About this RNA: Chemical mapping of a 177-nucleotide RNA with DMS and 2A3. Reactivities are rounded to 0.1 and cut off at 0 and 3. The reactions ran in a buffer of 150 mM KOAc, 10 mM MgCl2 and 150 mM bicine (pH 8.5), at 24 C. For DMS, 1,903 sequencing reads were counted. It was measured as part of the RMDB library TTRDEL.

RNA sequence: GGGAACGACUCGAGUAGAGUCGAAAAGAUAUGGACGAUGUUGGGAGCUCGUCGGAAACGACAGAGCGAAGAACAACGAUCGUCCUAAGUCAAAAUCCACGUCAUAACUUCGGUUAUGACGUGGAAAGUUACAGGUAGGCUUCGGCCUACCUGUAACAAAAGAAACAACAACAACAAC
Reactivity to DMS in 0.01 (KOAc 150mM, MgCl2 10mM, bicine 150mM(pH8.5), 24C), signal-to-noise 2, nucleotides 027 to 126: g000a040u000a300u010g000g010a000c000g020a010u000g000u000u010g000g010g010a120g030c000u000c010g010u000c020g000g000a080a110a200c010g020a020c010a110g000a000g020c000g010a030a100g020a080a170c000a000a010c010g010a010u000c000g000u010c000c000u000a010a050g000u000c010a100a070a090a040u000c000c000a000c000g000u000c000a020u000a010a000c000u000u010c220g050g000u000u000a000u000g010a010c000g010u010g000g000a000a000a030
Reactivity to 2A3 in 0.01 (KOAc 150mM, MgCl2 10mM, bicine 150mM(pH8.5), 24C), signal-to-noise 2, nucleotides 027 to 126: g030a020u100a020u290g000g000a000c000g000a000u010g020u000u010g000g000g030a040g000c010u010c030g020u000c000g010g010a070a050a010c010g020a020c130a260g010a040g000c030g020a050a020g060a030a010c010a000a010c050g180a050u010c000g010u000c000c000u010a050a020g090u020c030a030a010a020a200u010c010c000a010c000g000u020c000a000u020a010a000c000u040u060c260g080g000u000u010a000u020g000a010c020g000u000g000g000a020a000a000